[RMDB]
RNA sequence: GGGAACGACUCGAGUAGAGUCGAAAACUGGCCGAGAGCACGCUGCUCAUGGCCGAGAAAAGGACGCCGGCGGGGGUGCUCCAGUUGCUCCAAUUGCUCCAACUGAUGUCGCCGUAGUCAUCCGCCAGGGAUUAUCGACUUUCGAGUCGAUAAUCCCAAAAGAAACAACAACAACAAC
Reactivity to 2A3 in 0.01 (KOAc 150mM, MgCl2 10mM, bicine 150mM(pH8.5), 24C), signal-to-noise 3, nucleotides 027 to 126: c000u000g000g010c000c020g100a060g000a000g110c010a030c160g270c200u300g010c000u000c010a060u080g000g030c040c000g020a000g030a000a120a010a030g080g020a010c130g040c140c130g060g000c020g000g000g020g020g040u000g020c030u020c000c000a000g030u020u040g010c030u070c110c030a150a250u130u220g010c040u090c050c010a030a000c000u030g040a010u110g080u170c000g010c070c000g000u020a050g100u040c030a040u000c010c000g030c040c010a040